[RMDB]
RNA sequence: GGGAACGACUCGAGUAGAGUCGAAAAGGAUCCUUCGUAGUCAGGAAGGUAACUGCCUCGUGUACAGUUACCAGUGACUAGAUUCCAUGUCAUCGUACACGAGGAUGACAUCGUCUAUUAAGGAUCGCUACAUCUGAGUAUUCGUACUUAGAUGUAGAAAAGAAACAACAACAACAAC
Reactivity to DMS in 0.01 (KOAc 150mM, MgCl2 10mM, bicine 150mM(pH8.5), 24C), signal-to-noise 9, nucleotides 027 to 126: g010g000a010u000c000c000u000u000c170g010u000a020g010u000c010a090g010g010a120a110g000g010u000a030a030c030u000g010c060c020u000c150g010u000g010u010a180c010a070g010u000u000a030c080c060a140g010u000g000a020c020u000a090g000a110u000u000c110c120a060u000g000u000c000a010u000c040g010u000a040c120a070c160g000a050g000g000a010u000g000a020c020a040u000c160g000u000c020u000a050u000u000a030a020g010g010a010u000c000g000
Reactivity to 2A3 in 0.01 (KOAc 150mM, MgCl2 10mM, bicine 150mM(pH8.5), 24C), signal-to-noise 9, nucleotides 027 to 126: g030g000a000u000c000c000u010u020c040g070u010a000g000u000c030a030g060g140a130a050g040g020u030a020a020c020u040g020c000c010u050c050g040u050g010u030a030c010a030g010u030u050a050c000c020a020g030u010g010a000c000u010a030g040a130u010u000c040c020a020u050g000u000c000a020u010c030g040u050a020c070a010c050g050a030g060g000a000u010g000a000c010a040u020c020g020u000c010u020a080u040u080a030a000g000g000a000u000c000g000